Chemical mapping of a 207-nucleotide RNA with DMS. The RNA was probed in 150 mM KOAc, 10 mM MgCl2 and 150 mM bicine (pH 8.5) at 24 C.

RNA sequence: GGGAACGACUCGAGUAGAGUCGAAAAGGGGUCGUAUCUCUAGCGUGGUCUAGUAGUUUCACAAGGCGACUAUGUUGUCAGAGCUGAAGCCUCCACGGCUCUUGGAUUUACAUAGUCGCCUUGUGAAACUAGGACUCGGGUACGACGGAGGCACCCACAUAAAUAGUCGGUUCGCCGACUAUUUAUGAAAAGAAACAACAACAACAAC
Reactivity to DMS in 0.01 (KOAc 150mM, MgCl2 10mM, bicine 150mM(pH8.5), 24C), signal-to-noise 1, nucleotides 027 to 156: g000g020g050g030u000c030g000u020a030u000c010u020c050u000a110g030c120g050u030g000g010u000c010u000a110g030u010a040g020u000u000u000c000a000c010a010a010g060g040c020g040a030c050u000a010u000g020u020u000g020u000c040a040g010a070g000c030u010g000a050a120g010c030c020u000c010c030a300c040g020g000c020u000c010u000u020g050g010a050u010u000u000a030c020a040u000a020g010u000c020g000c000c000u010u010g010u000g010a000a000a000c000u000a030g000g000a040c020u010c080g020g010g030u000a010c010g020a040c040g020g030a050g030g020c040a150c010c000c000a300
Description: DMS adducts were read by reverse transcription with MarathonRT.